[RMDB]
RNA sequence: GGGAACGACUCGAGUAGAGUCGAAAAUGUGUGCUCGAGAGCCUCCCUCUCCGACAGAGCUUUUAGAUCUUCUGAUCUUUCCCUGGAGGAUAUCGCUUAUGCUUCAAGCGAUUCUCGGAAUAAUUAAUCCAAGACAAUAGUUCGCUAUUGUCUUGGAAAAAGAAACAACAACAACAAC
Reactivity to 2A3 in 0.01 (KOAc 150mM, MgCl2 10mM, bicine 150mM(pH8.5), 24C), signal-to-noise 2, nucleotides 027 to 126: u140g060u000g020u060g060c040u020c010g110a130g000a000g060c030c020u000c020c000c010u000c030u000c010c020g020a020c020a010g090a040g040c000u030u040u030u000a010g000a010u000c020u250u020c110u300g010a000u000c000u000u020u020c000c000c000u020g080g010a030g030g040a080u040a020u110c010g000c010u040u040a050u250g070c020u120u150c130a020a010g000c000g010a000u020u000c000u000c000g020g070a100a110u180a090a050u170u090a050a080
Reactivity to DMS in 0.01 (KOAc 150mM, MgCl2 10mM, bicine 150mM(pH8.5), 24C), signal-to-noise 5, nucleotides 027 to 126: u010g010u000g010u010g010c080u000c030g010a060g000a090g010c100c060u010c060c090c030u000c020u000c020c020g020a060c050a080g000a140g000c060u000u000u000u000a020g000a020u000c000u010u010c300u020g010a010u010c010u000u000u000c000c000c000u000g020g000a060g000g000a050u010a040u000c000g010c000u000u000a090u010g010c180u000u000c090a050a010g010c000g000a020u000u000c010u000c010g020g010a100a100u010a060a100u010u000a080a180
Overview: This 177-nucleotide RNA was probed chemically with 2A3 and DMS. The RNA was probed in 150 mM KOAc, 10 mM MgCl2 and 150 mM bicine (pH 8.5) at 24 C. The DMS profile rests on 7,125 reads. The data come from the RNA Mapping Database (RMDB), library M2PK90.